[RMDB]
RNA sequence: GGGAACGACUCGAGUAGAGUCGAAAAGCGUACUACGAAAGAGGUACAGCGAACGUACCUACCCACCAAGCUCCCAAAUAGGAGCUUGAGGGUACCAGUAGCUGUACUACCCACCUUUCGUAUCGCAAAUCCAGCAUAAGUUCGCUUAUGCUGGAAAACAAUCCCCACGUUUCGACGUGGGGAUUGUAAAAGAAACAACAACAACAAC
Reactivity to 2A3 in 0.01 (KOAc 150mM, MgCl2 10mM, bicine 150mM(pH8.5), 24C), signal-to-noise 1, nucleotides 027 to 156: g010c020g010u110a150c050u000a000c070g000a010a000a000g020a000g020g040u000a000c010a000g020c050g010a010a000c020g000u030a020c000c010u000a070c050c050c000a020c050c000a000a000g000c000u050c000c010c040a300a260a080u300a250g000g000a000g020c000u000u000g040a010g020g020g000u000a000c000c000a020g050u010a000g000c000u000g000u000a010c000u000a000c030c010c040a030c000c000u020u010u000c000g000u000a000u300c000g000c000a000a080a060u020c000c000a000g000c010a000u000a020a000g000u100u180c300g110c100u000u000a000u000g000c000u020g000g000a000a060a000